[RMDB]
RNA sequence: GGGAACGACUCGAGUAGAGUCGAAAAACGGGCAGUGGCGAUGGCAACGCGGCAGCCGCAGGGUCGACUUCUUCGCAGCCGCAACAGACGGGCCACGGGCAAAGAGGGGAGCUCGUUCUGUUGGAAGCAGGAGGCAUAUUUUCGAAUAUGCCUCCUGAAAAGAAACAACAACAACAAC
Reactivity to DMS in 0.01 (KOAc 150mM, MgCl2 10mM, bicine 150mM(pH8.5), 24C), signal-to-noise 2, nucleotides 027 to 126: a090c090g010g010g020c040a040g020u000g000g040c050g000a100u030g010g000c060a070a060c090g000c030g010g030c060a110g000c020c030g000c060a050g010g000g020u000c050g000a040c080u030u010c020u000u000c050g030c040a070g050c040c030g030c020a010a040c080a060g000a060c000g000g000g000c000c070a080c110g000g010g010c130a050a100a080g000a090g000g010g040g010a130g030c020u010c000g000u050u020c020u000g000u000u000g010g010a040a050g040
Reactivity to 2A3 in 0.01 (KOAc 150mM, MgCl2 10mM, bicine 150mM(pH8.5), 24C), signal-to-noise 5, nucleotides 027 to 126: a000c050g000g020g020c030a060g030u080g050g000c050g050a100u080g040g020c030a050a060c050g010c030g030g010c000a010g040c040c020g000c020a040g030g020g020u070c030g060a090c020u080u030c010u040u020c090g020c050a040g030c010c030g000c020a010a020c000a010g030a010c010g010g000g010c000c020a050c030g020g030g000c080a110a070a030g070a100g020g020g010g010a040g000c010u000c020g050u140u020c030u010g000u000u010g010g020a040a030g050